[RMDB]
An RNA of 207 nucleotides, treated with 2A3 and DMS and read out base by base. Conditions: 150 mM KOAc, 10 mM MgCl2 and 150 mM bicine (pH 8.5), 24 C. The 2A3 profile rests on 3,507 reads. 2A3 adducts were read by reverse transcription with SuperScript II with manganese. The DMS profile rests on 6,852 reads.
RNA sequence: GGGAACGACUCGAGUAGAGUCGAAAAUUAUGACCUGUAUCUUGUGCCAACUUCCUAUCUCAUCCUGUGACUUAGAAUGCCUUAACCUCCUAGGAAUGCAGCCCAGCAAGUCUCAGCCUCAAUUUACCCAGCUCCUAUUCAAGAUGGAGUUGCUGUACUAAAAUCAUGAGUUCGCUCAUGAUUUUAGAAAAGAAACAACAACAACAAC
Reactivity to 2A3 in 0.01 (KOAc 150mM, MgCl2 10mM, bicine 150mM(pH8.5), 24C), signal-to-noise 3, nucleotides 027 to 156: u160u080a140u170g080a040c010c010u050g050u070a110u040c040u070u100g040u100g060c020c010a030a060c040u080u040c010c010u030a100u080c040u010c040a060u040c020c020u060g030u050g070a050c010u040u030a050g050a170a050u110g020c010c000u060u080a100a090c010c000u000c020c020u040a030g040g000a060a020u060g020c010a010g020c010c000c000a000g000c030a040a020g030u000c010u000c060a010g010c010c010u050c030a040a050u060u050u090a050c020c010c010a000g010c010u010c000c010u080a130u180u190c060a080a030g060a110u120g010g000a020g010u010u020g010c010u020g000u010a040
Reactivity to DMS in 0.01 (KOAc 150mM, MgCl2 10mM, bicine 150mM(pH8.5), 24C), signal-to-noise 3, nucleotides 027 to 156: u000u010a110u000g010a190c020c010u010g010u010a070u010c030u020u010g020u020g010c040c020a040a090c050u010u000c010c000u000a110u000c040u000c040a080u000c040c060u000g020u010g010a080c100u000u010a090g010a070a110u010g010c010c020u010u000a090a110c020c020u000c000c020u000a110g020g000a050a090u000g010c060a130g010c040c020c020a140g010c070a040a090g050u000c020u000c020a070g000c010c020u010c040a030a120u000u000u010a080c050c000c010a090g000c010u000c000c010u000a160u000u020c110a060a120g020a110u000g010g020a090g030u000u000g010c000u000g000u010a220